[RMDB]
RNA sequence: GGGAACGACUCGAGUAGAGUCGAAAACGCUGGGUUACAGUGGAUUAUUGAGCUUUUGACGAAGAUUACUGAAGCGCGCACGGUAAAUUUCGAUAAGCUCAAUAAUCGUAACAUCUGUAACCUGUGCUGAAGCGCGCACGGCAACCGAAAGGUGCGAGUCACGUACGCAGUUCGCUGCGUACGUGACAAAAGAAACAACAACAACAAC
Reactivity to 2A3 in 0.01 (KOAc 150mM, MgCl2 10mM, bicine 150mM(pH8.5), 24C), signal-to-noise 1, nucleotides 027 to 156: c020g000c020u050g010g000g020u000u000a000c000a000g040u030g030g020a000u000u000a000u000u000g010a010g020c050u020u050u170u250g210a180c090g070a110a130g140a250u080u000a000c000u010g040a210a080g000c000g010c000g000c020a040c000g000g020u040a110a150a150u000u080u040c040g010a090u070a150a040g000c000u020c010a000a000u000a000a000u000c000g000u030a100a000c000a100u140c030u010g000u040a000a010c030c000u000g000u000g010c040u050g030a090a060g000c000g020c000g220c070a010c000g060g000c040a140a070c000c010g010a080a070a000g040g000u030g010c000g020a060